[RMDB]
This 207-nucleotide RNA was probed chemically with DMS and 2A3. It was measured as part of the RMDB library OK3TST. For DMS, 6,871 sequencing reads were counted. Conditions: 150 mM KOAc, 10 mM MgCl2 and 150 mM bicine (pH 8.5), 24 C.
RNA sequence: GGGAACGACUCGAGUAGAGUCGAAAAAGCGACUUGUCCCUACUAGUCCGCACGCGGGAGGUUAUCGCGCCCAAUCAUAGAUUCCCAGGUCAAAGGAACGCAAUUUCCUCAGCACAGGACAAGAGAUCUUCUAACCUAGUAGGAACCAAUGGGGCCACGGAAUAGUACUAUUCGUAGUACUAUUCCGAAAAGAAACAACAACAACAAC
Reactivity to DMS in 0.01 (KOAc 150mM, MgCl2 10mM, bicine 150mM(pH8.5), 24C), signal-to-noise 3, nucleotides 027 to 156: a080g010c010g030a080c080u000u000g010u000c030c010c020u000a080c030u000a050g000u000c020c040g000c060a140c120g030c050g000g020g030a060g010g010u010u000a030u000c010g020c020g010c010c010c030a070a130u010c060a120u010a100g000a210u000u000c000c030c030a190g000g020u000c050a100a090a080g050g020a070a060c030g020c120a060a090u000u000u000c010c020u000c000a090g010c040a120c080a080g030g020a060c060a070a080g010a090g000a070u000c060u000u000c030u010a090a080c090c020u010a070g010u010a060g020g000a050a020c030c050a060a110u010g000g000g010g000c000c030a140
Reactivity to 2A3 in 0.01 (KOAc 150mM, MgCl2 10mM, bicine 150mM(pH8.5), 24C), signal-to-noise 8, nucleotides 027 to 156: a000g060c030g040a040c030u050u070g040u080c020c010c010u030a010c010u010a010g040u020c050c040g060c050a050c120g050c030g020g130g020a030g020g010u090u060a110u210c030g000c000g020c020c010c010a030a060u130c060a060u100a100g090a140u060u050c020c030c010a040g020g060u050c050a090a080a070g010g020a080a060c040g000c050a040a050u020u030u020c010c000u010c020a010g030c040a040c020a080g010g050a030c030a050a010g050a000g010a070u050c030u070u020c030u190a080a110c030c000u020a030g020u030a020g040g030a030a030c020c020a040a100u100g010g020g030g030c020c080a020